RNA sequence: GGGAACGACUCGAGUAGAGUCGAAAAUGCGCACCCGCACUCCGACCAGACGGGACACCCUACCUCCAAGUCCAGCCCGGCGACGUGAUAGUCUUCGUCUUCAGGCUCGACAUAUCCAAGAGCGUCGCCGGCGUAAAGGAUUCGUCCUUUACGCCGGAAAAGAAACAACAACAACAAC
Reactivity to DMS in 0.01 (KOAc 150mM, MgCl2 10mM, bicine 150mM(pH8.5), 24C), signal-to-noise 5, nucleotides 027 to 126: u000g000c070g030c070a150c050c030c010g000c080a090c060u000c050c030g000a100c050c060a080g010a110c100g010g010g000a070c070a100c040c020c010u010a140c020c020u000c030c020a060a150g000u010c020c070a050g010c010c020c020g010g010c090g000a010c010g000u020g000a120u010a100g020u010c110u010u000c060g010u000c010u000u000c110a100g020g010c020u010c300g000a030c050a060u000a070u000c080c110a050a080g000a120g000c020g010u000c050g010
Reactivity to 2A3 in 0.01 (KOAc 150mM, MgCl2 10mM, bicine 150mM(pH8.5), 24C), signal-to-noise 2, nucleotides 027 to 126: u100g010c050g020c030a040c000c010c030g000c020a080c050u030c010c010g060a090c000c020a030g030a110c040g030g010g020a020c020a050c020c000c000u020a090c020c000u050c030c010a020a030g030u000c020c020a010g020c000c000c000g000g010c010g010a020c020g030u050g070a110u080a120g090u030c020u060u040c050g020u000c000u060u050c060a060g030g000c000u000c010g010a030c010a040u150a040u060c020c020a070a040g040a000g090c030g040u040c050g020